[RMDB]
RNA sequence: GGGAACGACUCGAGUAGAGUCGAAAAGAGCUCGACCUCCGCGCGGAACAAGGAGGACAUUUGGGCGGUGGCAUCGCUCACCAAGGAACCAAUGGAUCCCUUGUUGGUGGCAUCUACAUCGGUCAGCCUGCCUACCAUCGUUCGCGAUGGUAGGCAGAAAAGAAACAACAACAACAAC
Reactivity to 2A3 in 0.01 (KOAc 150mM, MgCl2 10mM, bicine 150mM(pH8.5), 24C), signal-to-noise 1, nucleotides 027 to 126: g030a020g000c030u080c100g030a040c010c030u100c030c040g060c020g020c120g160g100a050a080c040a000a020g060g030a080g050g020a010c000a040u160u130u090g030g000g040c040g010g010u010g030g000c040a240u170c080g000c050u080c040a030c010c010a110a050g130g020a090a050c000c000a030a000u010g010g000a050u000c000c000c000u000u000g040u000u020g020g050u020g080g000c020a040u130c060u090a070c010a190u140c030g000g020u020c000a040g010c020
Reactivity to DMS in 0.01 (KOAc 150mM, MgCl2 10mM, bicine 150mM(pH8.5), 24C), signal-to-noise 1, nucleotides 027 to 126: g000a160g010c000u010c110g050a020c040c050u000c110c040g030c210g030c050g000g000a040a010c000a000a030g030g000a000g000g010a300c050a000u000u000u000g020g000g040c140g010g040u000g030g030c010a140u010c190g000c190u000c000a040c070c000a140a090g000g000a200a090c000c000a000a030u000g000g000a300u000c010c010c000u000u000g000u000u000g020g040u000g010g000c160a090u020c040u030a040c130a050u000c160g000g000u000c010a040g000c010